[RMDB]
RNA sequence: GGGAACGACUCGAGUAGAGUCGAAAAAUUUAAGAGCCAGGACGGUCACCUUUGGGGUGGUGACAAGUGUGAUCACUUGGGUGGUGGCUGUGUUUGCGGAUCUCCCAGGAAUCUCGUUUACCAGAUCAAUGCACCUACCUUUCGAGGUAGGUGCAUUAAAAGAAACAACAACAACAAC
Reactivity to 2A3 in 0.01 (KOAc 150mM, MgCl2 10mM, bicine 150mM(pH8.5), 24C), signal-to-noise 2, nucleotides 027 to 126: a010u250u290u160a200a070g040a000g000c030c000a000g000g030a000c040g000g000u080c020a000c000c000u050u130u250g020g040g000g030u040g000g030u040g010a020c010a080a020g250u270g060u050g280a040u030c020a000c000u010u020g090g000g000u120g000g000u020g010g000c020u000g040u030g020u010u050u040g000c000g000g000a020u010c040u000c030c000c000a000g010g100a000a000u030c030u050c060g010u040u090u020a110c020c020a020g000a020u150c060
Reactivity to DMS in 0.01 (KOAc 150mM, MgCl2 10mM, bicine 150mM(pH8.5), 24C), signal-to-noise 1, nucleotides 027 to 126: a100u010u060u020a150a080g020a140g000c040c040a120g000g060a060c040g000g000u000c000a010c050c000u000u060u030g000g010g000g000u010g000g000u000g000a000c040a150a140g040u120g040u010g000a090u000c000a040c000u000u000g000g040g040u000g030g050u010g000g000c150u000g000u010g010u000u040u020g020c030g010g080a040u060c020u000c000c010c040a250g030g000a020a050u000c110u000c130g000u000u000u040a090c120c050a070g010a100u110c190

Structure probing data (2A3 and DMS) for a 177-nucleotide construct.
For DMS the reverse transcriptase was MarathonRT.
For 2A3 the reverse transcriptase was SuperScript II with manganese.
Conditions: 150 mM KOAc, 10 mM MgCl2 and 150 mM bicine (pH 8.5), 24 C.